[RMDB]
RNA sequence: GGGAACGACUCGAGUAGAGUCGAAAAGAUAUGGAGGACGUUACUGCGACCAUUGUGGGAGUCGGUAUUCGGAAACGAAUAUUACGACGAGGAUCACACUGUGGUCGCAGUAACGUCCUCCUAAGUCGUUAAGAUUAUACUUCGGUAUAAUCUUAACAAAAGAAACAACAACAACAAC
Reactivity to DMS in 0.01 (KOAc 150mM, MgCl2 10mM, bicine 150mM(pH8.5), 24C), signal-to-noise 2, nucleotides 027 to 126: g010a110u000a300u010g000g010a030g000g000a040c010g000u000u020a000c010u000g000c000g000a010c000c000a020u000u000g000u010g000g000g020a090g000u000c000g030g010u000a010u000u000c000g030g010a130a100a220c000g050a040a000u000a000u010u040a220c000g000a010c000g010a130g010g010a170u010c040a010c000a030c300u010g020u000g050g020u000c000g000c000a010g000u000a000a000c010g000u000c000c000u000c000c000u000a000a080g000u010c130